[RMDB]
The record gives the reactivity of an RNA of 177 nucleotides to DMS and 2A3. For DMS, 1,076 sequencing reads were counted. Source: RMDB library TTRDES, as collected in RNAgym. The reactions ran in a buffer of 150 mM KOAc, 10 mM MgCl2 and 150 mM bicine (pH 8.5), at 24 C. For 2A3 the reverse transcriptase was SuperScript II with manganese.
RNA sequence: GGGAACGACUCGAGUAGAGUCGAAAAGAUAUGGAUUCGACUAGGGAGUCGGUAUCGGAAACGAUAUGACCGACGCGAAACCUACUCGAAUCCUAAGUCAAAAGGCAAGAGGUUCGCCUCUUGCCAACCCACAGAUAACCUUCGGGUUAUCUGUGGGAAAAGAAACAACAACAACAAC
Reactivity to DMS in 0.01 (KOAc 150mM, MgCl2 10mM, bicine 150mM(pH8.5), 24C), signal-to-noise 1, nucleotides 027 to 126: g000a000u010a080u000g000g000a080u020u000c010g000a020c050u000a010g000g000g050a130g010u000c000g030g000u000a040u000c010g000g020a000a020a050c000g000a010u000a130u020g000a180c020c000g020a020c010g030c220g000a090a240a150c010c000u000a010c240u000c000g010a020a060u000c000c010u000a010a090g000u000c010a090a090a100a130g000g020c000a000a010g020a020g000g000u000u010c270g030c010c030u000c000u010u000g000c050c000a000a000
Reactivity to 2A3 in 0.01 (KOAc 150mM, MgCl2 10mM, bicine 150mM(pH8.5), 24C), signal-to-noise 1, nucleotides 027 to 126: g000a010u020a000u040g000g000a010u030u010c010g020a010c000u000a040g000g080g200a120g120u020c000g020g000u010a000u020c000g010g000a010a000a010c000g000a000u060a130u260g300a100c040c050g000a020c000g020c020g130a300a300a140c010c000u000a010c010u000c000g000a000a020u040c000c000u000a030a010g020u000c020a110a020a060a130g000g050c000a020a000g000a000g000g020u100u170c280g130c060c000u040c010u000u000g000c040c000a000a000